Chemical mapping of a 177-nucleotide RNA with DMS and 2A3. For DMS the reverse transcriptase was MarathonRT. 2A3 adducts were read by reverse transcription with SuperScript II with manganese.
[RMDB]
RNA sequence: GGGAACGACUCGAGUAGAGUCGAAAAGAUAUGGAUCCAUUAUCAGGAGGUAUCAGCUCGGAAACGAGCUGAGUACUACCCACCCUGUGUGGAUCCUAAGUCAAAACCGGUGCGUUCGCGCACCGGACAACAAGAAUUGCUUCGGCAAUUCUUGUUGAAAAGAAACAACAACAACAAC
Reactivity to DMS in 0.01 (KOAc 150mM, MgCl2 10mM, bicine 150mM(pH8.5), 24C), signal-to-noise 3, nucleotides 027 to 126: g000a000u000a250u020g000g000a010u000c000c000a010u000u010a080u020c000a000g010g010a150g040g010u000a040u000c000a010g010c000u000c000g020g000a040a050a170c010g000a010g000c000u000g000a030g000u010a060c300u010a100c070c100c300a290c170c000c000u000g000u000g020u000g000g010a010u010c010c000u000a020a060g020u010c030a110a040a120a130c020c010g000g000u000g020c020g040u000u010c220g000c030g000c010a020c000c010g000g000a050
Reactivity to 2A3 in 0.01 (KOAc 150mM, MgCl2 10mM, bicine 150mM(pH8.5), 24C), signal-to-noise 1, nucleotides 027 to 126: g030a000u030a010u070g000g010a000u000c000c020a030u240u200a180u300c030a000g100g100a250g180g180u030a030u040c000a000g000c000u000c000g010g010a040a040a000c020g010a000g060c000u010g020a000g000u000a020c070u030a050c020c080c060a240c020c000c000u030g000u000g020u000g020g000a000u000c000c000u000a020a000g040u040c020a030a040a120a250c020c000g000g000u000g000c010g030u020u080c300g000c020g010c170a010c010c010g030g000a010
It was measured as part of the RMDB library TTRDES.